[RMDB]
RNA sequence: GGGAACGACUCGAGUAGAGUCGAAAAGAGUUAAAACUCGAAAUCAAUCAAACUCGGUCAAACUCGUAAAAUCGAUCUAAUUUUACCGAUUUUAACUGAGUUUGACCGAGUUUGAUCGAUUUCGAGUUUUAACCUACAAGAUAUCUUCGGAUAUCAAUGUUAAAACAAUAUUCGUAUUGUUUUAACAAAAAGAAACAACAACAACAAC
Reactivity to DMS in 0.01 (KOAc 150mM, MgCl2 10mM, bicine 150mM(pH8.5), 24C), signal-to-noise 1, nucleotides 027 to 156: g000a090g010u000u000a000a020a010a010c000u010c000g020a010a030a020u010c000a020a010u000c000a000a020a020c000u000c000g000g000u000c000a010a000a020c010u010c000g000u000a020a020a020a030u010c000g000a010u000c120u040a150a220u010u000u000u010a020c010c000g010a030u000u000u000u000a020a070c030u010g050a030g030u000u010u000g010a010c000c010g000a010g020u010u000u000g000a000u010c010g010a010u000u000u000c020g010a000g000u010u000u010u000a000a010c000c010u000a080c080a160a200g000a000u000a000u000c010u010u020c300g030g020a020u010a000u000c010a000a160